This 177-nucleotide RNA was probed chemically with 2A3 and DMS. For DMS, 18,537 sequencing reads were counted. The 2A3 profile rests on 34,239 reads.
RNA sequence: GGGAACGACUCGAGUAGAGUCGAAAAGAUAUGGAUUUGGACAUGAUCACUGAUCGGAAACGAUCAUUGAUCAACAGCCAACGGUCCUAAGUCAAAAUCGAAUGUGCUGUUCGCAGCACAUUCGAAACAUCCUAGAAAGGUUCGCCUUUCUAGGAUGAAAAGAAACAACAACAACAAC
Reactivity to 2A3 in 0.01 (KOAc 150mM, MgCl2 10mM, bicine 150mM(pH8.5), 24C), signal-to-noise 9, nucleotides 027 to 126: g050a010u100a060u180g030g000a010u050u050u100g010g010a040c090a160u120g020a000u010c000a000c020u010g000a000u000c010g030g020a070a060a030c010g000a000u000c000a000u000u000g000a000u010c010a010a020c040a000g050c000c000a040a050c150g130g010u000c010c010u050a140a050g080u050c050a040a040a010a300u040c010g000a000a000u010g000u010g010c000u020g040u090u120c300g000c140a000g000c000a000c010a000u010u000c000g000a000a000a000
Reactivity to DMS in 0.01 (KOAc 150mM, MgCl2 10mM, bicine 150mM(pH8.5), 24C), signal-to-noise 9, nucleotides 027 to 126: g010a080u010a300u010g000g000a020u000u000u000g010g000a050c080a250u000g000a010u000c000a010c070u000g010a010u000c000g010g000a100a080a170c010g000a010u000c000a010u000u000g010a010u000c000a020a050c270a140g000c010c000a020a070c300g010g000u000c000c000u000a070a100g010u000c040a070a030a120a120u000c000g010a010a000u000g000u000g010c010u000g000u000u010c240g010c000a000g010c000a010c000a000u000u010c000g000a000a050a140